[RMDB]
RNA sequence: GGGAACGACUCGAGUAGAGUCGAAAAACAGCGAAAGGCACAAGACUUCGAACAUUAUAGCAGUUAGUAGUUGCCUAAACCCAUUGCAAUAUAUGGGACAGUAGAGGUCGCAAGCCUAGACUGUGCGAAAAGUCGCAAGGUUUCGACCUUGCGACAAUAUAAAUAUCAUAUUCGUAUGAUAUUUAUAAAAAGAAACAACAACAACAAC
Reactivity to DMS in 0.01 (KOAc 150mM, MgCl2 10mM, bicine 150mM(pH8.5), 24C), signal-to-noise 3, nucleotides 027 to 156: a050c050a060g030c040g000a150a130a110g030g040c000a120c060a150a210g020a040c000u010u000c010g010a070a140c080a150u000u000a130u000a080g020c000a040g020u000u010a140g020u000a170g010u000u000g000c010c020u000a060a070a150c000c000c010a030u000u000g010c120a140a150u010a060u010a000u010g000g000g030a090c060a110g000u000a090g010a070g000g020u000c010g030c100a090a140g000c010c000u000a090g010a060c010u000g000u010g000c060g000a060a050a070a120g000u000c010g000c010a020a000g010g000u000u000u010c270g000a070c000c000u000u000g010c000g010a020c000a020a020
Reactivity to 2A3 in 0.01 (KOAc 150mM, MgCl2 10mM, bicine 150mM(pH8.5), 24C), signal-to-noise 4, nucleotides 027 to 156: a000c020a000g000c030g050a300a170a010g020g010c020a030c030a060a010g020a010c010u010u020c020g050a060a040c040a160u140u190a120u230a100g030c040a010g030u060u160a050g030u120a030g030u120u060g000c010c020u050a090a060a060c000c000c000a000u000u010g000c010a030a010u030a000u000a000u200g010g020g000a000c000a000g010u030a000g000a000g000g010u020c010g020c070a060a000g000c010c000u010a010g010a050c000u010g000u030g030c010g050a120a030a040a030g000u000c010g000c010a000a010g020g000u060u130u170c190g050a060c000c000u000u000g000c000g000a000c000a000a000